[RMDB]
Annotation
This 177-nucleotide RNA was probed chemically with 2A3 and DMS. Values cover nucleotides 27 to 126. For 2A3 the reverse transcriptase was SuperScript II with manganese. The RNA was probed in 150 mM KOAc, 10 mM MgCl2 and 150 mM bicine (pH 8.5) at 24 C. Source: RMDB library M2PK50, as collected in RNAgym. For 2A3, 8,833 sequencing reads were counted.
RNA sequence: GGGAACGACUCGAGUAGAGUCGAAAACACUAUUGGUUCGCCAAUAGUGAAACGGGAAGCCGAAGCCGAACGGCAAGCCGAAGCCGAACGGCAACGGCAAAAAAACUGCGUUCUUCGGAACGCAGAACAUCUAUAUCAAGUUCGCUUGAUAUAGAUGAAAAGAAACAACAACAACAAC
Reactivity to 2A3 in 0.01 (KOAc 150mM, MgCl2 10mM, bicine 150mM(pH8.5), 24C), signal-to-noise 2, nucleotides 027 to 126: c010a000c010u010a000u000u010g020g030u060u050c140g030c080c000a000a000u000a010g000u000g020a070a000a000c080g040g030g090a130a020g020c010c010g000a010a010g010c000c000g000a010a000c010g000g010c030a020a020g200c060c040g040a030a000g010c010c010g000a020a000c000g010g000c010a000a010c000g000g000c000a000a020a010a000a000a000a010c000u010g000c010g010u020u000c000u020u020c110g070g010a000a000c000g000c000a000g000a000a000
Reactivity to DMS in 0.01 (KOAc 150mM, MgCl2 10mM, bicine 150mM(pH8.5), 24C), signal-to-noise 7, nucleotides 027 to 126: c010a010c000u000a000u000u000g010g010u000u020c260g030c000c000a000a010u000a000g010u000g010a010a060a090c100g010g000g010a120a140g020c000c000g010a050a300g000c010c010g010a020a250c020g000g010c000a040a240g010c130c130g000a090a110g000c000c010g000a030a260c020g000g000c010a010a140c010g000g010c010a000a000a040a070a030a030a050c000u000g010c000g000u000u000c010u010u010c160g010g010a000a000c000g000c000a010g000a050a120